[RMDB]
RNA sequence: GGGAACGACUCGAGUAGAGUCGAAAAGAUAUGGAUGUCCUAGGCGAUGAGAAUACAUCGGAAACGAUGUGAUUCGAGCCUAAGGACAUCCUAAGUCAAAAGGCUGUAAUGUUCGCAUUACAGCCAAGUUGUAAAAAGAGUUCGCUCUUUUUACAACAAAAGAAACAACAACAACAAC
Reactivity to 2A3 in 0.01 (KOAc 150mM, MgCl2 10mM, bicine 150mM(pH8.5), 24C), signal-to-noise 6, nucleotides 027 to 126: g000a000u010a000u050g000g000a000u000g000u000c000c000u000a000g000g010c010g230a300u300g020a170g000a010a000u010a010c000a000u010c000g000g000a000a000a000c010g000a000u010g030u250g070a060u000u000c000g020a040g000c000c010u020a030a010g000g000a000c000a000u000c000c000u000a000a000g000u000c010a020a030a090a230g000g000c010u000g000u010a010a000u010g020u060u070c300g000c180a000u000u000a000c010a000g010c000c000a000a000
Reactivity to DMS in 0.01 (KOAc 150mM, MgCl2 10mM, bicine 150mM(pH8.5), 24C), signal-to-noise 7, nucleotides 027 to 126: g000a010u000a020u010g000g000a010u000g000u000c000c000u000a020g010g030c010g030a200u020g010a060g000a010a000u000a020c000a000u000c000g010g000a010a000a020c000g010a010u000g000u010g010a020u000u000c000g000a020g030c000c000u000a030a100g000g000a000c000a000u000c000c000u000a000a060g000u000c010a110a110a170a160g010g010c000u000g010u000a000a000u000g000u000u010c300g020c010a010u000u000a010c000a000g010c000c000a010a020